[RMDB]
RNA sequence: GGGAACGACUCGAGUAGAGUCGAAAACGAAACCAACGGCUGGGCCUGGCUCAUGCCCGAUUUCGGCUACUGGUCCUGGCCCGAGAUCAAGGCCGGCCAAUACCGCAGCAUCCGUCAGCGCAUCGCCGCAAUCGACGAAGGCGCCAUCAUAAAUGGCAGAUCACUACUCAUUCGUGAGUAGUGAUCUAAAAGAAACAACAACAACAAC
Reactivity to 2A3 in 0.01 (KOAc 150mM, MgCl2 10mM, bicine 150mM(pH8.5), 24C), signal-to-noise 1, nucleotides 027 to 156: c040g050a090a000a010c080c000a090a010c020g000g000c030u080g030g060g090c000c040u030g090g000c000u030c070a050u170g010c000c040c030g090a090u050u040u020c010g000g020c060u170a110c100u050g100g020u010c000c040u050g000g000c020c020c000g000a000g000a000u020c050a030a140g000g020c000c030g000g020c030c000a050a090u240a090c050c030g020c000a050g000c000a040u040c020c020g050u050c060a020g000c030g000c080a240u140c180g090c060c020g030c090a100a050u050c090g040a080c030g000a050a050g130g000c000g010c000c060a020u130c060a100u120a180a090a050u060g000g050c020

Source: RMDB library OK3TST, as collected in RNAgym.
The record gives the reactivity of an RNA of 207 nucleotides to 2A3.
2A3 adducts were read by reverse transcription with SuperScript II with manganese.
The reactions ran in a buffer of 150 mM KOAc, 10 mM MgCl2 and 150 mM bicine (pH 8.5), at 24 C.